This 207-nucleotide RNA was probed chemically with 2A3. Reactivities are given for positions 27 through 156. Source: RMDB library M2RFPK, as collected in RNAgym. Conditions: 150 mM KOAc, 10 mM MgCl2 and 150 mM bicine (pH 8.5), 24 C. 2A3 adducts were read by reverse transcription with SuperScript II with manganese.
RNA sequence: GGGAACGACUCGAGUAGAGUCGAAAAGGUCAGGCCUGAUCGGAAGCAGCAGCAGGUGAGUCCGCCUUAUGUGAAGGAUCGGCUGAAACACGAGGAAAUACUGAGCCAACGCAAGACGGUAGCCGAAAAAAUCUAGUUCACUUCGGUGAACUAGAAACCAAGAAGGGUUGUUCGCAACCCUUCUUGGAAAAGAAACAACAACAACAAC
Reactivity to 2A3 in 0.01 (KOAc 150mM, MgCl2 10mM, bicine 150mM(pH8.5), 24C), signal-to-noise 1, nucleotides 027 to 156: g050g000u070c030a030g030g050c000c020u130g010a040u060c040g110g000a090a040g020c000a020g020c000a010g000c010a020g060g000u000g080a070g010u000c020c030g040c000c010u100u130a100u130g070u010g010a040a000g080g000a040u060c030g010g000c000u010g030a000a080a000c080a000c050g020a050g010g150a110a070a030u150a250c100u040g040a010g040c040c020a010a030c050g040c070a030a030g010a030c030g020g010u030a060g070c000c000g000a070a040a020a010a000a000u000c000u010a000g000u000u000c000a030c050u030u040c170g050g000u000g000a000a000c000u000a000g000a000a000a000